[RMDB]
RNA sequence: GGGAACGACUCGAGUAGAGUCGAAAACGUCGUGAACUAGCGACAAUGCCGUAGAUCCAUCGUUAUCUAACCGAAACAUCGUGACUAGUCGUAGAAUAGAACCAGGAGAGGUCGCUGGCAAACAAAGACGUGGUCACAGAUUCGUCUGUGGCCACGUAAAAGAAACAACAACAACAAC
Reactivity to 2A3 in 0.01 (KOAc 150mM, MgCl2 10mM, bicine 150mM(pH8.5), 24C), signal-to-noise 5, nucleotides 027 to 126: c040g010u020c010g030u030g040a090a070c030u030a060g010c010g020a010c010a030a060u160g020c030c010g040u050a020g020a070u020c030c020a040u050c090g120u090u060a080u070c050u030a040a090c040c010g060a050a030a060c050a040u090c080g050u040g070a060c020u020a020g050u040c040g060u050a000g040a080a060u090a060g040a040a010c010c020a020g000g060a090g010a020g050g020u000c000g000c030u030g000g000c000a050a060a000c030a020a110a010g080
Reactivity to DMS in 0.01 (KOAc 150mM, MgCl2 10mM, bicine 150mM(pH8.5), 24C), signal-to-noise 5, nucleotides 027 to 126: c100g000u040c060g030u010g020a160a150c080u010a100g010c020g030a020c030a130a090u020g000c050c030g000u010a050g000a090u000c050c020a030u010c120g010u010u010a030u000c070u020a060a130c140c060g020a080a050a130c130a080u000c060g010u020g000a060c050u000a040g010u000c030g020u010a050g000a050a070u020a020g000a060a070c050c080a120g010g000a100g020a080g000g020u010c030g000c010u010g000g000c060a060a140a030c140a070a080a070g010